[RMDB]
RNA sequence: GGGAACGACUCGAGUAGAGUCGAAAAGAAGAGCAGGCAGAUAAUCUUGUGCAGUAUGCAUGCUCAUAGCUCCACAAGAAGGAAGGCAGCAAAAGAAUAACUGCCACUGCACAAGUGGAGCCGCAGAAUUAGGACUACGGUUCGCCGUAGUCCUAAUAAAAGAAACAACAACAACAAC
Reactivity to DMS in 0.01 (KOAc 150mM, MgCl2 10mM, bicine 150mM(pH8.5), 24C), signal-to-noise 4, nucleotides 027 to 126: g010a070a160g000a040g010c000a040g030g030c010a050g010a130u020a100a090u040c040u020u010g010u000g030c110a060g010u010a090u000g000c030a010u020g010c000u000c020a140u010a110g010c000u020c020c030a080c040a090a170g020a110a080g010g010a140a100g000g000c020a010g000c100a120a100a150a110g020a110a100u060a070a260c030u000g010c000c020a080c010u010g000c050a120c050a010a240g020u010g000g000a040g020c010c100g000c130a090g010a070
Reactivity to 2A3 in 0.01 (KOAc 150mM, MgCl2 10mM, bicine 150mM(pH8.5), 24C), signal-to-noise 4, nucleotides 027 to 126: g130a020a000g030a000g060c060a030g010g000c000a010g060a170u150a160a120u200c050u110u130g060u120g050c020a010g030u100a030u120g010c030a020u060g010c000u000c040a050u030a000g010c010u000c030c000a040c010a070a050g110a080a000g140g040a030a080g030g000c000a000g020c040a040a130a020a000g250a070a140u170a090a030c000u000g000c000c000a000c010u040g000c000a010c010a090a000g000u020g020g020a000g020c010c010g040c030a070g050a120